[RMDB]
RNA sequence: GGGAACGACUCGAGUAGAGUCGAAAAGAUAUGGAGUUGAGAACUGCGCUAGGGAACUCGGAAACGAGUCAACCCUAGAACUACGCAGACAACUCCUAAGUCAAAGCUGUCUCUUCGGAGACAGCAAGAUCAUUCGUAUCUUCGGAUACGAAUGAUCAAAAGAAACAACAACAACAAC
Reactivity to 2A3 in 0.01 (KOAc 150mM, MgCl2 10mM, bicine 150mM(pH8.5), 24C), signal-to-noise 1, nucleotides 027 to 126: g040a010u050a020u160g020g040a000g020u020u020g040a080g050a300a050c000u010g000c010g000c020u010a010g010g000g030a080a030c010u000c020g000g020a080a090a020c000g020a010g010u020c030a040a140c000c010c000u030a000g000a010a010c040u120a040c030g000c000a000g040a080c000a000a000c000u000c010c000u010a110a010g010u020c050a110a050a010g000c000u010g010u020c000u010c000u030u070c300g220g000a010g010a020c000a000g000c010a000a000
Reactivity to DMS in 0.01 (KOAc 150mM, MgCl2 10mM, bicine 150mM(pH8.5), 24C), signal-to-noise 2, nucleotides 027 to 126: g000a030u000a300u000g000g000a030g040u000u000g020a240g030a180a190c000u000g080c000g030c000u000a010g000g000g010a050a010c000u000c000g010g000a160a050a190c020g000a020g010u020c010a140a000c000c020c030u000a030g000a100a080c110u000a300c010g030c000a010g010a160c000a020a020c010u000c000c000u000a020a110g020u020c000a080a180a160g000c000u000g000u000c000u000c020u010u020c210g010g010a010g000a010c000a000g020c000a010a030